[RMDB]
RNA sequence: GGGAACGACUCGAGUAGAGUCGAAAAAGUUCAAGAAGUUCCAGGAACAACUCAGGUAGAUCUGACCUCACCCGGGAGCUGGAGGGAAAUGCCUUCAUCUGGGAUUUAGAGGAUCUGCCCUGACCUGGGAGUUAAAGGAUCUGUCCUCACCAGAGAACACUAAUUAAUGGUUCGCCAUUAAUUAGUGAAAAGAAACAACAACAACAAC
Reactivity to 2A3 in 0.01 (KOAc 150mM, MgCl2 10mM, bicine 150mM(pH8.5), 24C), signal-to-noise 7, nucleotides 027 to 156: a000g020u030u020c040a040a050g090a100a020g210u040u010c010c010a010g030g010a100a110c090a080a090c090u000c040a010g000g000u020a000g010a040u010c040u060g120a120c020c010u020c030a060c010c000c000g050g020g020a090g110c110u060g000g020a010g020g010g050a120a300a140u240g080c000c000u010u000c000a050u000c010u010g020g020g050a080u110u100u150a060g000a020g000g010a010u000c000u010g010c010c020c020u020g010a020c000c000u000g000g010g010a030g010u050u110a090a070a010g050g010a030u030c030u060g080u070c020c020u070c040a090c050c020a050g080a010g030a180a010
Reactivity to DMS in 0.01 (KOAc 150mM, MgCl2 10mM, bicine 150mM(pH8.5), 24C), signal-to-noise 3, nucleotides 027 to 156: a110g010u010u000c060a080a130g010a110a110g000u000u000c010c020a060g010g000a110a160c090a080a270c110u000c060a050g000g030u000a040g020a030u000c020u000g010a250c060c020u000c080a080c000c010c000g000g030g010a040g000c080u000g030g020a040g020g030g010a100a100a110u010g030c010c020u010u000c020a080u010c010u000g000g010g010a100u000u000u000a120g000a300g000g010a040u000c010u000g020c030c010c110u000g000a080c020c030u020g010g010g000a060g020u000u000a030a120a120g000g010a050u000c050u010g000u010c030c020u000c030a130c100c040a120g010a120g020a130a270